Source: RMDB library OK2TST, as collected in RNAgym. Chemical mapping of a 177-nucleotide RNA with DMS. The DMS profile rests on 3,593 reads. For DMS the reverse transcriptase was MarathonRT.
RNA sequence: GGGAACGACUCGAGUAGAGUCGAAAAAGGUUCUCAUUCUGCUUCUGUGCCACCUCCCGGGACAGUUCCUCCAGGCGGCCUAGCAGCCGACCCUCCUGCUCCACCAGGAAAGCCCUCAGUGCCUGGACCCAAGAGUAGAUUUCGAUCUACUCUUGGGAAAAGAAACAACAACAACAAC
Reactivity to DMS in 0.01 (KOAc 150mM, MgCl2 10mM, bicine 150mM(pH8.5), 24C), signal-to-noise 3, nucleotides 027 to 126: a060g010g010u000u000c000u000c020a110u020u010c050u000g010c030u000u000c050u000g040u000g000c030c040a070c080c030u000c040c020c030g020g010g010a060c100a110g010u010u000c020c020u010c040c040a080g010g000c050g000g010c040c030u010a090g000c090a140g010c060c040g000a150c050c010c030u010c010c010u010g010c070u000c050c060a100c090c010a060g010g000a070a110a150g010c030c010c030u010c050a070g040u010g010c080c010u010g010g010a300